[RMDB]
RNA sequence: GGGAACGACUCGAGUAGAGUCGAAAACGGACGCUGGGCCUUACCGAGGGUCCUCCUGCGAGUAUACUGAAGCGCGCACGGUAUACGAUGAGCAGGCGGGACCCGUUUGACGUAAGGCCUGUGCUGAAGCGCGCACGGCAACCGAAAGGUGCGAAUCCCUCCCAUAUAGGUUCGCCUAUAUGGGAGGAAAAGAAACAACAACAACAAC
Reactivity to DMS in 0.01 (KOAc 150mM, MgCl2 10mM, bicine 150mM(pH8.5), 24C), signal-to-noise 1, nucleotides 027 to 156: c060g000g020a230c150g030c020u010g010g020g020c000c000u010u010a050c060c010g010a040g080g010g020u000c000c010u000c000c010u010g040c000g000a150g040u010a010u000a020c020u000g000a030a010g060c030g070c000g000c010a300c030g100g000u000a010u000a020c040g030a200u010g000a170g000c010a060g030g020c140g060g000g020a070c020c000c000g020u010u010u020g010a230c150g000u000a020a020g030g020c000c000u000g010u000g010c040u000g000a110a000g020c010g040c010g000c000a180c030g030g020c000a170a170c000c020g030a070a070a190g020g020u000g010c060g000a180a190u000c010
The record gives the reactivity of an RNA of 207 nucleotides to DMS. For DMS the reverse transcriptase was MarathonRT. For DMS, 2,035 sequencing reads were counted. The reactions ran in a buffer of 150 mM KOAc, 10 mM MgCl2 and 150 mM bicine (pH 8.5), at 24 C.